[RMDB]
RNA sequence: GGGAACGACUCGAGUAGAGUCGAAAAGGUUGCAGUGAGCCGAGGUCAUGGCAUUGCACUCCAGCCUGGUGGCAGAGUGAGACUCCGUCUCAAAAAAAAGAAAGUCUCUUUUUACAACUUUUUUGAGGUAUAACUUACAUAUCAGAAAAUCACCGGAAAUAGGUGCAUUAUUCGUAAUGCACCUAUUAAAAGAAACAACAACAACAAC
Reactivity to DMS in 0.01 (KOAc 150mM, MgCl2 10mM, bicine 150mM(pH8.5), 24C), signal-to-noise 2, nucleotides 027 to 156: g040g000u000u000g010c060a090g030u000g030a060g030c030c000g010a080g010g040u000c060a130u000g010g010c070a130u000u000g030c000a060c010u000c020c020a130g030c010c010u000g020g030u010g060g040c000a140g000a090g010u000g020a110g000a130c010u000c090c060g010u010c010u000c010a010a010a000a060a050a070a060a070g010a080a070a110g010u000c020u000c000u010u020u000u000u020a130c050a060a090c040u010u000u010u000u010u000g000a120g010g010u000a060u010a080a050c100u000u000a080c050a080u000a090u000c010a180g000a080a030a060a070u000c080a090c060c020g010g020a080
Reactivity to 2A3 in 0.01 (KOAc 150mM, MgCl2 10mM, bicine 150mM(pH8.5), 24C), signal-to-noise 3, nucleotides 027 to 156: g020g020u020u040g030c010a010g010u000g090a030g020c020c020g040a070g040g080u160c100a070u250g010g000c020a040u010u160g020c020a020c020u000c000c020a010g010c000c020u040g050g030u060g010g000c030a010g050a010g080u080g020a060g020a050c000u020c130c080g050u000c010u020c040a090a080a010a010a000a000a000a060g070a040a140a020g070u000c020u040c040u110u100u040u110u120a120c040a090a160c060u080u040u070u000u040u030g020a030g030g010u120a100u020a190a030c010u040u040a030c020a070u190a060u130c020a010g060a030a060a040a030u030c060a060c020c060g000g030a020
An RNA of 207 nucleotides, treated with DMS and 2A3 and read out base by base.
High DMS reactivity at an A or C suggests that its Watson-Crick edge is free.
For DMS, 2,779 sequencing reads were counted.
Source: RMDB library OK3TST, as collected in RNAgym.
DMS adducts were read by reverse transcription with MarathonRT.
2A3 adducts were read by reverse transcription with SuperScript II with manganese.